[RMDB]
RNA sequence: GGGAACGACUCGAGUAGAGUCGAAAAGAUAUGGACGUACUAGUCUCAACAGCUCGGAAACGAGACAUGAGAUUAGUGACGUCCUAAGUCAAAGACUGUCAAGAGUGUUCGCACUCUUGACAGUCAACAUGUUCUACGGGUUCGCCCGUAGAACAUGAAAAGAAACAACAACAACAAC
Reactivity to DMS in 0.01 (KOAc 150mM, MgCl2 10mM, bicine 150mM(pH8.5), 24C), signal-to-noise 3, nucleotides 027 to 126: g010a050u000a300u000g020g010a010c010g030u000a050c010u000a020g000u000c000u000c010a030a110c300a180g000c010u010c000g000g000a130a060a210c010g000a020g010a020c050a200u000g000a000g000a010u000u000a000g010u000g010a010c000g000u010c000c000u010a030a050g000u000c030a150a100a170g000a030c010u050g000u010c000a010a010g000a020g010u000g030u000u010c210g000c000a030c000u000c000u000u000g000a030c010a000g000u000c000a040a130
Reactivity to 2A3 in 0.01 (KOAc 150mM, MgCl2 10mM, bicine 150mM(pH8.5), 24C), signal-to-noise 1, nucleotides 027 to 126: g030a040u120a050u160g000g000a000c000g010u000a000c000u010a000g000u000c010u000c000a070a150c100a090g060c000u020c000g070g020a080a090a050c020g000a000g050a030c020a080u130g000a020g000a000u000u000a010g000u040g030a000c000g000u000c000c000u000a010a030g000u010c030a020a020a240g000a000c000u010g000u030c000a010a000g000a000g030u020g060u170u180c300g040c110a000c000u010c000u000u000g000a000c000a000g000u000c000a000a000

Source: RMDB library TTRDEL, as collected in RNAgym. Structure probing data (DMS and 2A3) for a 177-nucleotide construct. The DMS profile rests on 2,278 reads. Values cover nucleotides 27 to 126. The RNA was probed in 150 mM KOAc, 10 mM MgCl2 and 150 mM bicine (pH 8.5) at 24 C. The 2A3 profile rests on 2,890 reads.